[RMDB]
RNA sequence: GGGAACGACUCGAGUAGAGUCGAAAAACGAGUCAUACGUGACUCGAACCCCUGCCUUGAUGAAAUGCAUGUUCAGUCCGUGUUUCAGCUGACCACCCUGAUUAUACACAUGCGCUGAGCAGGAGAACCAUUCGAACAAGUUCGCUUGUUCGAAUGGAAAAGAAACAACAACAACAAC
Reactivity to 2A3 in 0.01 (KOAc 150mM, MgCl2 10mM, bicine 150mM(pH8.5), 24C), signal-to-noise 9, nucleotides 027 to 126: a000c010g000a000g010u000c010a020u030a110c300g130u050g000a000c000u000c000g020a050a040c010c000c000c010u020g020c010c010u120u100g060a120u110g050a120a070a040u150g040c050a040u020g010u010u050c050a040g030u030c030c050g020u010g020u030u060u050c020a020g010c040u120g060a090c010c010a030c010c020c000u020g020a060u040u200a070u050a110c060a000c020a030u060g010c030g020c070u030g010a020g010c010a000g010g060a050g030a030a010
Reactivity to DMS in 0.01 (KOAc 150mM, MgCl2 10mM, bicine 150mM(pH8.5), 24C), signal-to-noise 4, nucleotides 027 to 126: a070c010g010a010g030u000c000a060u020a100c220g030u020g000a000c000u020c010g010a060a060c100c030c010c040u010g000c040c060u020u030g000a070u010g020a080a060a050u020g020c050a060u000g020u000u000c030a060g000u000c120c050g000u010g010u000u010u000c020a030g020c110u000g010a080c120c060a030c060c080c000u000g010a030u020u010a120u010a090c160a060c020a020u010g020c180g000c050u010g010a070g000c010a010g020g010a080g020a080a190
Overview:
This 177-nucleotide RNA was probed chemically with 2A3 and DMS. It was measured as part of the RMDB libraries RFM100 and RFMREP. The reactions ran in a buffer of 150 mM KOAc, 10 mM MgCl2 and 150 mM bicine (pH 8.5), at 24 C.